[RMDB]
The data come from the RNA Mapping Database (RMDB), library RFM100. Chemical mapping of a 177-nucleotide RNA with DMS and 2A3. Values cover nucleotides 27 to 126. 2A3 adducts were read by reverse transcription with SuperScript II with manganese. DMS adducts were read by reverse transcription with MarathonRT. The RNA was probed in 150 mM KOAc, 10 mM MgCl2 and 150 mM bicine (pH 8.5) at 24 C.
RNA sequence: GGGAACGACUCGAGUAGAGUCGAAAACAAGUCCCUUCAAGAGUUAUCGUUGAUACCCCUCGUAGUGCACAUUCCUUUAACGCUUCAAAAUCUGUAAAGCACGCCAUAUCGCCGAAAGGCACACUUAGCGUAUUCAGCAAUUCGUUGCUGAAUACGCAAAAGAAACAACAACAACAAC
Reactivity to DMS in 0.01 (KOAc 150mM, MgCl2 10mM, bicine 150mM(pH8.5), 24C), signal-to-noise 1, nucleotides 027 to 126: c170a050a200g000u000c020c000c000u000u000c150a070a180g000a080g000u000u000a070u040c010g000u000u000g030a050u150a110c090c000c000c000u000c110g060u000a000g000u000g000c000a080c000a260u040u000c000c110u000u000u030a110a110c090g010c080u020u000c030a050a020a070a060u070c000u000g110u050a100a070a010g000c000a020c070g000c000c090a000u050a040u040c120g000c000c020g000a170a000a040g050g020c100a000c180a110c060u070u020a150
Reactivity to 2A3 in 0.01 (KOAc 150mM, MgCl2 10mM, bicine 150mM(pH8.5), 24C), signal-to-noise 2, nucleotides 027 to 126: c070a020a010g100u030c000c000c000u060u080c110a050a040g040a040g070u040u030a070u090c060g050u050u110g030a070u040a100c000c000c010c000u010c000g070u060a090g080u000g060c000a000c000a070u070u090c000c020u020u000u060a100a040c030g010c000u030u060c040a090a110a070a120u030c060u000g040u100a000a010a120g030c020a020c010g010c010c010a080u080a020u200c060g000c000c000g050a040a040a020g010g000c040a010c010a010c030u010u020a000